[RMDB]
RNA sequence: GGGAACGACUCGAGUAGAGUCGAAAACGCCGUCUUUCUCCCCAACGCGCGCGGAUGACGGCCCGCCCUGUACCGACGGGCCCUACGUGACGUUUGAUACCCUGUUUAUGGUGUCGUCGAUCGACGAAGGAAGGAGUUGAUUCGUCAACUCCUUCCUAAAAGAAACAACAACAACAAC
Reactivity to DMS in 0.01 (KOAc 150mM, MgCl2 10mM, bicine 150mM(pH8.5), 24C), signal-to-noise 2, nucleotides 027 to 126: c120g000c040c020g000u010c030u010u010u000c070u000c040c030c010c070a040a090c070g000c080g020c070g030c040g000g010a100u010g020a080c300g000g020c020c010c000g000c020c030c040u000g020u010a130c130c070g000a040c030g000g010g000c010c020c020u000a050c050g020u010g020a110c020g010u000u000u010g020a140u000a070c040c020c090u000g020u000u000u010a090u030g000g000u020g020u000c020g010u020c050g000a090u010c050g000a040c030g000a120
Reactivity to 2A3 in 0.01 (KOAc 150mM, MgCl2 10mM, bicine 150mM(pH8.5), 24C), signal-to-noise 1, nucleotides 027 to 126: c100g030c040c020g040u010c010u070u090u000c060u040c040c060c000c020a030a030c010g070c000g020c020g000c010g080g000a110u100g030a020c010g000g000c020c000c010g040c050c000c020u200g080u170a100c040c050g090a060c000g000g020g040c010c000c000u040a040c000g030u070g060a030c020g000u000u050u050g030a030u040a020c000c000c010u060g150u180u100u060a130u070g000g030u060g030u050c020g000u010c010g030a120u150c090g000a020c000g010a030